[RMDB]
RNA sequence: GGGAACGACUCGAGUAGAGUCGAAAAUCAGUCAUGGCUAGGAUCAUGCAUCAGUCAUGUCAUGGAUACACUGAUCAGAUCACUAGUACUAGAGUACUAGUCGUGUAUGCUACUAGCGAUCAGCGCAUAGAAAUACUUCAUUCGUGAAGUAUUUCUAAAAAGAAACAACAACAACAAC
Reactivity to 2A3 in 0.01 (KOAc 150mM, MgCl2 10mM, bicine 150mM(pH8.5), 24C), signal-to-noise 9, nucleotides 027 to 126: u070c010a010g060u020c010a020u030g050g000c000u040a070g150g060a040u060c040a130u220g070c040a040u050c020a020g050u030c000a020u050g020u030c040a150u090g090g010a030u030a080c040a000c040u050g020a060u080c040a030g040a110u070c010a010c030u000a000g040u000a020c020u110a100g170a040g130u000a010c000u010a000g040u020c080g010u030g030u040a040u120g060c020u030a140c020u060a060g030c010g060a050u060c030a020g070c050g000c060a020
Reactivity to DMS in 0.01 (KOAc 150mM, MgCl2 10mM, bicine 150mM(pH8.5), 24C), signal-to-noise 9, nucleotides 027 to 126: u000c040a090g010u010c060a040u000g010g000c010u000a070g020g010a060u010c050a090u000g020c100a080u010c050a060g000u000c050a050u000g010u000c030a120u000g010g000a090u000a100c130a040c030u000g000a030u000c110a140g010a130u000c090a060c000u000a010g010u000a010c020u000a140g010a200g010u000a020c010u000a010g000u000c120g020u000g000u000a050u000g010c070u000a110c070u010a040g010c030g000a060u000c060a080g020c090g020c170a160